RNA sequence: GGGAACGACUCGAGUAGAGUCGAAAAAUAAGGCAUUGCCUAGGGAUGGCUAAAAUACAUGAUUUCCUUGUCAAAACAUGAAGGGAUAAACCACAGCAGUGUUUUGGCCCAAGAACUAUUUGGUGCUUAUUAAAAAUGUAGGUUCUGGGCUGGGCGAGCUACCCAUCAGUUUCGACUGAUGGGUAGCAAAAGAAACAACAACAACAAC
Reactivity to 2A3 in 0.01 (KOAc 150mM, MgCl2 10mM, bicine 150mM(pH8.5), 24C), signal-to-noise 2, nucleotides 027 to 156: a020u110a050a000g040g010c040a010u020u170g020c000c030u010a050g070g000g070a060u040g050g010c070u050a010a020a210a000u100a020c110a080u080g010a080u040u030u140c000c000u000u000g090u040c090a040a040a150a140c030a100u130g070a020a040g000g010g010a030u060a140a060a050c010c010a060c010a080g030c000a010g040u000g010u060u060u100u120g000g010c000c000c000a010a060g020a010a030c070u050a050u120u130u130g050g060u070g000c030u170u100a110u240u270a190a130a070a000a000u080g050u060a030g080g010u000u000c000u000g000g010g000c010u000g000g000g070c090g040a050

An RNA of 207 nucleotides, treated with 2A3 and read out base by base. The data come from the RNA Mapping Database (RMDB), library OK3TST. The reactions ran in a buffer of 150 mM KOAc, 10 mM MgCl2 and 150 mM bicine (pH 8.5), at 24 C.